[RMDB]
RNA sequence: GGGAACGACUCGAGUAGAGUCGAAAAGGACGUGGUUAACGUGCAACUCACGCUUACGCGCGUCGGGGAGCUACAGGGAUCGCUUGAGCAAACGGCGACGACGCCACGCGCGACGGGCACGGGACCGGUGCAAAUCCGUGUCGGGUCAACGACCGUGAAUAACUAGCAGAUUCGUCUGCUAGUUAUUAAAAGAAACAACAACAACAAC
Reactivity to 2A3 in 0.01 (KOAc 150mM, MgCl2 10mM, bicine 150mM(pH8.5), 24C), signal-to-noise 4, nucleotides 027 to 156: g110g000a020c040g010u050g000g040u140u110a140a010c030g020u020g030c040a030a110c020u010c040a040c030g030c010u120u170a070c100g030c020g000c020g010u030c090g010g000g000g010a060g000c060u180a180c120a070g060g030g060a260u120c060g020c100u070u100g060a040g100c060a160a170a100c060g030g020c000g030a040c020g050a020c030g020c000c000a010c030g000c010g000c000g020a030c020g050g000g000c020a000c000g000g000g020a050c040c040g020g000u020g020c010a020a000a090u020c020c000g020u030g030u050c030g010g030g030u060c040a070a060c070g030a020c010c040g010u030g070
Reactivity to DMS in 0.01 (KOAc 150mM, MgCl2 10mM, bicine 150mM(pH8.5), 24C), signal-to-noise 3, nucleotides 027 to 156: g010g030a030c030g030u000g020g030u000u010a060a080c000g020u000g030c020a090a120c110u050c010a080c000g000c050u010u010a120c140g000c040g030c020g000u000c010g010g010g010g010a170g020c020u010a070c040a090g020g020g010a150u000c060g030c030u000u000g010a120g030c120a060a110a130c060g000g010c030g030a060c050g020a040c060g010c010c010a080c100g000c050g020c030g030a040c040g000g020g020c010a050c010g000g000g030a100c060c020g030g000u010g000c050a080a100a100u010c060c020g010u010g010u000c000g020g010g000u000c030a110a180c060g010a050c000c000g020u020g000